[RMDB]
RNA sequence: GGGAACGACUCGAGUAGAGUCGAAAAUGUCUGUUACGUUCUCUCAAAGUUACUACUCACCCUCAUAUCAGACCUGCAGAGAAAGAUACCAGAUGAAAUCAGAACGGCCUUCUGAAUACGAGGCAACACUUACAAAGACAUUCGUGUCUUUGUAAGUAAAAGAAACAACAACAACAAC
Reactivity to 2A3 in 0.01 (KOAc 150mM, MgCl2 10mM, bicine 150mM(pH8.5), 24C), signal-to-noise 6, nucleotides 027 to 126: u110g010u010c020u020g030u040u050a050c060g020u070u010c010u000c000u000c040a070a070a060g050u080u090a110c040u030a050c010u030c040a060c010c010c010u050c050a060u050a070u140c010a020g060a090c000c010u020g000c050a010g020a010g040a070a070a020g040a050u060a050c010c030a010g010a060u060g030a080a090a050u090c020a020g030a120a030c070g120g010c010c000u070u030c010u030g030a070a050u130a120c060g010a010g020g000c010a030a020c020
Reactivity to DMS in 0.01 (KOAc 150mM, MgCl2 10mM, bicine 150mM(pH8.5), 24C), signal-to-noise 9, nucleotides 027 to 126: u000g010u000c020u000g020u010u010a090c080g010u000u000c020u000c010u010c080a100a110a120g010u000u000a090c080u000a060c040u010c050a170c080c030c030u000c050a070u000a060u010c050a110g010a070c060c030u000g020c110a050g010a070g010a040a160a080g000a120u000a060c080c030a030g000a060u000g000a050a100a110u010c050a040g000a050a080c190g010g000c070c030u000u000c040u000g010a070a060u020a070c160g010a060g010g010c070a070a080c150
An RNA of 177 nucleotides, treated with 2A3 and DMS and read out base by base. 2A3 adducts were read by reverse transcription with SuperScript II with manganese. The DMS profile rests on 12,954 reads. The data come from the RNA Mapping Database (RMDB), library OK2TRN. For 2A3, 9,927 sequencing reads were counted. Values cover nucleotides 27 to 126.